The record gives the reactivity of an RNA of 177 nucleotides to 2A3 and DMS. For 2A3 the reverse transcriptase was SuperScript II with manganese. DMS adducts were read by reverse transcription with MarathonRT. For 2A3, 8,863 sequencing reads were counted. The RNA was probed in 150 mM KOAc, 10 mM MgCl2 and 150 mM bicine (pH 8.5) at 24 C. Values cover nucleotides 27 to 126.
RNA sequence: GGGAACGACUCGAGUAGAGUCGAAAAGAUUCGACGUAGGCCUGAUAAGACGCGCCAGCGUCGCAUCAGGCAAAUGUGCCGGCCCAUUGUCGGAUGCGGCGUGAACACCUUAUUCGACCUACACACCCUGGUCAACUAUAUUCGUAUAGUUGACCAGAAAAGAAACAACAACAACAAC
Reactivity to 2A3 in 0.01 (KOAc 150mM, MgCl2 10mM, bicine 150mM(pH8.5), 24C), signal-to-noise 2, nucleotides 027 to 126: g040a080u120u120c060g030a020c100g030u030a020g000g080c010c020u020g020a020u010a030a020g030a020c050g050c050g050c240c080a050g000c000g000u000c010g010c000a000u000c000a000g000g010c000a000a000a020u020g020u050g050c020c010g070g000c020c040c030a110u040u150g040u040c030g010g000a020u020g070c010g000g020c030g000u040g020a020a010c050a060c020c020u050u030a150u150u030c000g010a030c000c010u030a010c060a010c010a030c010c020
Reactivity to DMS in 0.01 (KOAc 150mM, MgCl2 10mM, bicine 150mM(pH8.5), 24C), signal-to-noise 7, nucleotides 027 to 126: g010a160u000u000c080g010a100c090g010u000a030g020g010c000c000u010g010a020u000a050a150g000a030c070g020c080g010c160c160a300g010c000g000u000c000g000c150a010u000c000a010g010g010c010a000a010a020u000g010u010g010c030c030g010g000c030c080c050a130u010u000g010u000c040g000g010a020u000g000c010g000g000c000g020u010g010a100a120c070a080c070c010u000u000a090u000u000c080g000a020c010c020u000a010c020a150c150a140c090c040